[RMDB]
RNA sequence: GGGAACGACUCGAGUAGAGUCGAAAAAUCGGCUACGUAUAUACGCGAUCGCGUAAUGCCGAUGCCGAUUAGCCGUAUAGCCGGCUACGCGCGGCCGUACGCGUAAUCGGCGCAUGCUAUACGAUCGUGCAUGGUUAGCUUUCGAGCUAACCAUGCAAAAAGAAACAACAACAACAAC
Reactivity to 2A3 in 0.01 (KOAc 150mM, MgCl2 10mM, bicine 150mM(pH8.5), 24C), signal-to-noise 2, nucleotides 027 to 126: a000u010c010g000g040c020u050a000c020g050u050a100u030a020u020a170c030g010c040g090a150u110c130g010c000g020u000a040a060u050g000c010c000g000a010u030g000c000c010g000a000u000u000a010g120c030c020g010u030a000u010a040g010c020c030g060g060c080u060a100c220g050c030g000c010g030g000c040c020g020u020a000c000g000c070g060u020a000a020u030c010g010g050c040g000c000a040u180g040c050u030a030u040a120c050g040a010u070c010g050
Reactivity to DMS in 0.01 (KOAc 150mM, MgCl2 10mM, bicine 150mM(pH8.5), 24C), signal-to-noise 2, nucleotides 027 to 126: a020u010c000g010g000c010u010a200c240g040u000a090u010a130u000a060c090g010c000g000a090u010c090g030c020g040u010a020a060u000g000c020c000g000a070u000g010c010c000g010a030u000u010a100g070c070c010g020u000a020u000a060g010c020c000g000g000c030u000a050c180g000c030g000c020g010g010c060c090g040u010a070c000g040c120g010u010a030a000u020c010g000g010c000g020c170a050u010g010c070u010a050u000a010c050g010a050u000c110g010